Conditions: 150 mM KOAc, 10 mM MgCl2 and 150 mM bicine (pH 8.5), 24 C.
This 177-nucleotide RNA was probed chemically with DMS and 2A3.
The DMS profile rests on 41,595 reads.
Values cover nucleotides 27 to 126.
DMS adducts were read by reverse transcription with MarathonRT.
Source: RMDB library OK1LIB, as collected in RNAgym.
[RMDB]
RNA sequence: GGGAACGACUCGAGUAGAGUCGAAAAACUAGUAUGUACAGGGGUAAGUUGACCUGUCAUCUAGACAACUUACCAGGUACUCAAAGGUAAGUUGGUUGAGUACCACAGAGUACGAACUAAGUACUCAGAGUAUGGAUGCCUUCGGGUAUCUAUACUCAAAAGAAACAACAACAACAAC
Reactivity to DMS in 0.01 (KOAc 150mM, MgCl2 10mM, bicine 150mM(pH8.5), 24C), signal-to-noise 9, nucleotides 027 to 126: a110c010u000a010g010u060a020u000g000u040a010c010a030g000g000g010g000u030a060a120g010u020u020g000a070c020c010u010g000u010c070a030u000c040u010a000g000a110c030a020a020c040u000u000a020c000c000a100g010g020u020a060c110u010c090a050a100a080g010g000u020a030a060g010u000u010g010g000u020u000g000a070g020u000a060c000c010a140c180a100g000a030g010u000a010c010g000a080a100c180u030a080a100g000u000a010c000u000c010a140
Reactivity to 2A3 in 0.01 (KOAc 150mM, MgCl2 10mM, bicine 150mM(pH8.5), 24C), signal-to-noise 5, nucleotides 027 to 126: a000c000u000a000g040u100a040u010g020u030a000c000a000g010g020g010g050u140a130a060g070u100u100g090a050c010c000u000g010u000c000a000u000c010u010a000g020a020c020a000a010c000u000u010a010c000c000a000g040g010u040a040c010u020c050a020a020a000g040g000u020a000a030g040u010u000g000g000u020u040g020a010g000u010a020c000c000a010c050a030g010a000g000u000a000c000g020a080a030c060u100a090a020g000u010a000c000u000c010a000
In probing experiments dimethyl sulfate is read out at A N1 and C N3, which are open when not base-paired.